[RMDB]
RNA sequence: GGGAACGACUCGAGUAGAGUCGAAAAGUGGGAUUUGUUCUACAUUUAUUGAUCUUAUGCCUUCAGGUGAGUGUCUAAAUGGAAUGAACUCAUCCAUACCGUUUACCAUCAUCUUUGCCAGCAAUAAUACGACGUCAGUAUUCGUACUGACGUCGUAAAAAGAAACAACAACAACAAC
Reactivity to DMS in 0.01 (KOAc 150mM, MgCl2 10mM, bicine 150mM(pH8.5), 24C), signal-to-noise 2, nucleotides 027 to 126: g000u000g000g010g000a050u000u010u000g020u000u000c030u000a080c030a040u000u000u000a000u000u020g010a030u000c020u010u000a120u000g010c010c020u000u020c270a140g040g040u020g000a020g020u010g000u000c060u000a060a030a030u000g000g020a090a080u000g000a010a040c010u000c070a020u000c010c000a090u010a020c020c030g000u000u010u000a100c040c020a090u000c100a070u000c030u000u000u000g000c020c040a050g000c130a040a110u010a100a180
Reactivity to 2A3 in 0.01 (KOAc 150mM, MgCl2 10mM, bicine 150mM(pH8.5), 24C), signal-to-noise 2, nucleotides 027 to 126: g020u040g000g020g010a060u020u050u030g050u050u030c030u020a060c020a040u010u010u090a120u050u200g030a030u040c000u030u120a080u270g100c030c000u100u180c100a060g030g030u060g020a080g020u190g000u020c010u010a050a010a010u060g000g060a080a120u090g020a030a030c020u020c040a000u000c000c000a020u040a040c020c010g040u010u070u060a120c020c000a050u100c000a040u010c000u040u100u060g000c030c000a050g000c040a060a080u050a220a030